Notes:
Conditions: 150 mM KOAc, 10 mM MgCl2 and 150 mM bicine (pH 8.5), 24 C. The record gives the reactivity of an RNA of 177 nucleotides to DMS and 2A3. For 2A3 the reverse transcriptase was SuperScript II with manganese.

[RMDB]
RNA sequence: GGGAACGACUCGAGUAGAGUCGAAAAAUUCAAUUUGGAUCCUGUUAAGUGAGACAGGCAUUCACUGACAAGAAGGAACAUUUAAAUUUUGCCAAAUAAGUUCAUUAGUAUUCAGAAAGCUUUGCAACAUCGCGUAAAGAUUCGUCUUUACGCGAUGAAAAGAAACAACAACAACAAC
Reactivity to DMS in 0.01 (KOAc 150mM, MgCl2 10mM, bicine 150mM(pH8.5), 24C), signal-to-noise 3, nucleotides 027 to 126: a070u000u000c100a020a100u000u000u000g010g000a070u010c010c000u000g030u000u000a080a080g030u020g020a070g000a060c080a120g000g010c160a050u000u010c000a040c050u000g020a080c120a110a070g010a080a060g000g020a030a070c050a060u000u000u000a070a040a060u000u000u010u030g020c050c080a050a060a060u010a060a110g000u000u000c050a040u030u010a090g000u020a040u000u010c090a060g000a060a100a080g010c080u020u000u000g000c140a100a180
Reactivity to 2A3 in 0.01 (KOAc 150mM, MgCl2 10mM, bicine 150mM(pH8.5), 24C), signal-to-noise 4, nucleotides 027 to 126: a000u100u110c020a030a040u060u030u100g090g000a050u040c030c030u000g010u010u090a190a080g060u070g130a050g020a080c040a030g000g070c000a000u030u030c020a000c030u070g040a060c050a050a090g210a100a020g170g010a060a000c030a020u010u080u190a060a060a080u090u050u040u070g040c010c000a100a040a000u140a120a040g020u000u000c020a020u010u130a000g080u090a150u120u100c010a050g070a060a120a000g010c020u050u060u050g000c040a020a020